Overview
Structure probing data (2A3 and DMS) for a 177-nucleotide construct. For 2A3 the reverse transcriptase was SuperScript II with manganese. DMS adducts were read by reverse transcription with MarathonRT.
RNA sequence: GGGAACGACUCGAGUAGAGUCGAAAAGUUCAAGAUUCUCUUUUGUCCACUCCUUUAACGACCUUUAAGGGCAUCGGAUCACUUUCUCUAGGGAGAACUAGCUCAGGGAGGCUACCAAUCAAUGAACGACGAUUCGAAUAUUCGUAUUCGAAUCGUCAAAAGAAACAACAACAACAAC
Reactivity to 2A3 in 0.01 (KOAc 150mM, MgCl2 10mM, bicine 150mM(pH8.5), 24C), signal-to-noise 4, nucleotides 027 to 126: g040u070u110c060a030a040g020a240u130u010c000u000c000u000u080u070u110g060u020c000c030a030c060u040c000c000u040u100u120a090a070c080g090a110c020c030u140u190u170a140a140g040g000g000c050a040u100c040g060g000a040u100c030a040c080u030u080u040c020u010c020u090a130g070g030g020a080g020a070a060c040u020a030g010c010u000c060a010g030g000g030a020g040g000c000u030a040c000c030a040a050u090c030a080a270u130g010a060a020c060
Reactivity to DMS in 0.01 (KOAc 150mM, MgCl2 10mM, bicine 150mM(pH8.5), 24C), signal-to-noise 2, nucleotides 027 to 126: g040u000u000c060a120a250g010a010u000u030c040u000c000u000u000u020u020g000u000c000c270a050c150u000c010c040u000u000u030a070a120c170g000a080c040c130u020u030u000a080a070g030g000g000c050a070u000c090g070g040a070u020c090a050c010u030u000u000c010u000c130u000a120g000g000g000a020g010a040a130c210u050a000g000c100u000c000a020g040g000g010a140g000g000c020u000a040c090c060a040a090u020c170a050a060u040g030a050a070c300